[RMDB]
RNA sequence: GGGAACGACUCGAGUAGAGUCGAAAACGAAGCCUAAUAUUCCGCCCAAUCACACAAAUUUUGUACUGAAUCCUAGUAGCCAACCUACUUAUCUUAACCUGAAUUGGGGGCCAACCAGUAGAACACCCUACCAGGUACGUUUCGACGUACCUGGUAGAAAAGAAACAACAACAACAAC
Reactivity to DMS in 0.01 (KOAc 150mM, MgCl2 10mM, bicine 150mM(pH8.5), 24C), signal-to-noise 1, nucleotides 027 to 126: c130g010a110a130g000c020c030u000a030a080u000a200u000u000c110c100g000c010c050c000a050a040u000c050a010c110a050c090a090a060a150u010u000u010u000g000u000a070c110u000g000a060a090u000c040c020u000a030g050u000a000g000c080c040a060a120c080c000u000a090c050u050u000a010u000c040u010u030a030a100c090c060u010g030a030a030u040u000g030g000g000g010g000c040c110a030a050c120c010a030g010u000a040g010a120a110c110a070c070c110
Reactivity to 2A3 in 0.01 (KOAc 150mM, MgCl2 10mM, bicine 150mM(pH8.5), 24C), signal-to-noise 1, nucleotides 027 to 126: c000g020a000a000g040c000c040u030a090a010u050a060u210u020c060c030g040c090c000c000a020a020u090c000a020c000a010c040a140a150a000u000u090u120u280g050u040a020c010u070g000a070a020u000c030c030u000a070g020u020a020g000c020c040a030a000c050c020u090a040c030u090u100a000u080c010u000u050a020a070c000c020u020g030a130a130u190u140g020g000g020g000g000c000c000a010a040c010c010a050g050u040a020g110a100a020c000a020c110c010
Chemical mapping of a 177-nucleotide RNA with DMS and 2A3. The 2A3 profile rests on 730 reads.